Structure probing data (DMS and 2A3) for a 177-nucleotide construct. DMS adducts were read by reverse transcription with MarathonRT. 2A3 adducts were read by reverse transcription with SuperScript II with manganese.

RNA sequence: GGGAACGACUCGAGUAGAGUCGAAAACUUCAGCUUGCCUCGCCUGAAUCACUGCACUCGUGUGGUGAGCGGGGGCUGCAUGGCUACAAACGGAAAUGCUGGGAAGGAUUUUUUCCCUGCCUGUCUGGAGAAGAUUGUGUUUCGACACAAUCUUCUCAAAAGAAACAACAACAACAAC
Reactivity to DMS in 0.01 (KOAc 150mM, MgCl2 10mM, bicine 150mM(pH8.5), 24C), signal-to-noise 2, nucleotides 027 to 126: c040u000u000c080a130g000c030u000u020g000c020c040u000c040g030c010c060u000g020a120a120u000c000a000c040u000g020c000a010c060u030c300g000u000g000u020g000g000u010g020a000g030c060g030g050g010g000g050c060u000g010c040a000u010g010g000c060u020a060c210a050a090a300c050g030g000a040a090a020u000g000c000u020g000g000g020a070a010g000g030a130u040u020u030u020u000u000c000c000c000u000g000c010c070u010g000u000c040u020g030
Reactivity to 2A3 in 0.01 (KOAc 150mM, MgCl2 10mM, bicine 150mM(pH8.5), 24C), signal-to-noise 5, nucleotides 027 to 126: c010u130u100c030a000g020c010u100u110g050c010c010u050c030g120c030c020u110g060a120a100u040c000a010c000u010g010c000a020c030u090c150g120u030g000u010g030g000u020g000a010g000c020g020g010g010g030g000c000u010g010c020a130u050g060g000c020u080a060c120a030a160a020c020g060g030a020a060a050u090g020c030u060g030g040g020a020a030g140g100a150u190u030u020u000u080u000c000c000c020u020g010c020c020u070g040u030c030u070g070